[RMDB]
RNA sequence: GGGAACGACUCGAGUAGAGUCGAAAACUACAUAAAUUCGUUUAUGUAGCAUCGGGGACGCGCAGACUCCCCGUGAGACGGCUCUAGCCUUCCAAGCUCUGCACUCAACAGCUUUCGAGCUGUUGAAUUAGAUUAUUUGCUUCGGCAAAUAAUCUAAAAAAGAAACAACAACAACAAC
Reactivity to DMS in 0.01 (KOAc 150mM, MgCl2 10mM, bicine 150mM(pH8.5), 24C), signal-to-noise 3, nucleotides 027 to 126: c010u000a010c000a010u000a000a010a050u010u010c170g010u000u000u000a000u000g000u000a000g020c080a090u010c010g010g000g000g010a020c110g010c130g020c020a000g000a040c050u000c000c000c010c010g030u010g000a040g020a060c110g000g010c010u000c220u000a130g010c010c010u010u000c020c260a040a040g000c070u000c000u010g010c040a220c220u000c000a000a010c000a000g010c010u000u000u010c210g000a010g020c000u000g010u000u000g000a020a100
Reactivity to 2A3 in 0.01 (KOAc 150mM, MgCl2 10mM, bicine 150mM(pH8.5), 24C), signal-to-noise 2, nucleotides 027 to 126: c010u010a000c000a010u010a000a000a010u050u060c100g040u030u010u020a010u010g000u000a010g010c030a110u130c000g000g000g000g000a000c080g080c010g000c240a000g000a020c000u000c000c000c000c000g000u030g000a020g000a010c040g010g010c010u100c100u300a140g030c000c000u050u000c050c040a030a000g020c050u000c000u030g000c010a020c010u010c000a000a010c010a000g020c000u090u090u220c210g100a010g010c010u000g000u010u000g000a010a000
Chemical mapping of a 177-nucleotide RNA with DMS and 2A3.
The reactions ran in a buffer of 150 mM KOAc, 10 mM MgCl2 and 150 mM bicine (pH 8.5), at 24 C.
For 2A3, 2,308 sequencing reads were counted.